[RMDB]
RNA sequence: GGGAACGACUCGAGUAGAGUCGAAAAUCCAUGGCGCCAUGCGGAUCAUGUCAUGCAUGUGUGAUCUGAGGAUCCAUGCGGAUCGAGGUACUCGAGCUACGAUCAUGUCUCUAUGCGCCAUGCUAGCCAAUCGUUGGUCAUUCGUGACCAACGAUUGAAAAGAAACAACAACAACAAC
Reactivity to 2A3 in 0.01 (KOAc 150mM, MgCl2 10mM, bicine 150mM(pH8.5), 24C), signal-to-noise 5, nucleotides 027 to 126: u000c010c000a000u000g020g030c010g020c050c060a040u070g020c130g080g010a060u230c020a020u060g030u050c010a050u110g010c010a010u050g100u030g120u120g100a010u000c010u040g100a170g250g040a020u000c000c000a030u080g020c040g050g000a010u010c000g010a010g110g160u120a180c060u010c030g030a020g030c100u190a050c110g030a050u160c020a020u040g020u000c000u010c010u060a030u170g000c010g000c000c000a010u020g000c010u070a030g100c030
Reactivity to DMS in 0.01 (KOAc 150mM, MgCl2 10mM, bicine 150mM(pH8.5), 24C), signal-to-noise 4, nucleotides 027 to 126: u000c090c000a020u000g010g000c020g020c040c060a120u000g010c300g000g010a010u000c030a020u000g010u000c030a160u010g020c030a060u000g010u010g020u010g010a020u010c000u000g010a200g030g010a010u000c000c000a040u010g020c050g010g010a060u010c000g010a060g000g040u010a090c060u000c040g000a040g000c060u000a080c200g000a030u010c000a020u000g010u000c000u000c010u000a120u000g000c030g000c010c010a010u000g000c100u000a100g020c200
Source: RMDB library OK2TRN, as collected in RNAgym. Structure probing data (2A3 and DMS) for a 177-nucleotide construct. DMS adducts were read by reverse transcription with MarathonRT. 2A3 adducts were read by reverse transcription with SuperScript II with manganese. The 2A3 profile rests on 6,575 reads.